[RMDB]
RNA sequence: GGGAACGACUCGAGUAGAGUCGAAAAGAUAUGGAGCCACUACCCACCCUAUGUGACUCUGCACGAAGAACGCAAUCGGAAACGAUUGCGGGAGUGCAGAGUCACCUAGGAGGUGGCUCCUAAGUCAGAAGAGUAUAUGGUUCGCCAUAUACUCUUCAAAAGAAACAACAACAACAAC
Reactivity to DMS in 0.01 (KOAc 150mM, MgCl2 10mM, bicine 150mM(pH8.5), 24C), signal-to-noise 3, nucleotides 027 to 126: g010a150u020a170u000g020g020a000g020c000c000a010c000u000a150c010c010c020a300c120c000c000u000a000u000g010u000g000a020c000u000c000u010g000c000a020c010g000a110a210g000a090a200c030g020c000a000a000u000c000g010g000a130a160a290c000g000a000u010u000g000c000g000g000g000a060g010u000g010c010a010g000a010g000u000c000a000c010c040u000a010g010g000a040g020g000u000g000g010c000u000c010c000u000a020a070g000u010c230a130
Reactivity to 2A3 in 0.01 (KOAc 150mM, MgCl2 10mM, bicine 150mM(pH8.5), 24C), signal-to-noise 2, nucleotides 027 to 126: g170a080u300a200u300g010g000a000g020c030c000a040c020u230a300c060c010c020a030c020c010c000u010a010u020g000u000g010a000c000u030c000u000g000c000a000c020g300a300a060g030a090a000c020g000c020a000a000u000c000g060g000a020a100a080c040g020a010u000u050g000c000g050g000g000a020g010u000g000c000a000g000a010g000u000c000a000c000c000u000a000g020g010a000g000g010u010g000g010c010u020c000c000u000a000a000g100u060c170a030

Record summary: Structure probing data (DMS and 2A3) for a 177-nucleotide construct. Values cover nucleotides 27 to 126. The data come from the RNA Mapping Database (RMDB), library TTRINS. For DMS the reverse transcriptase was MarathonRT.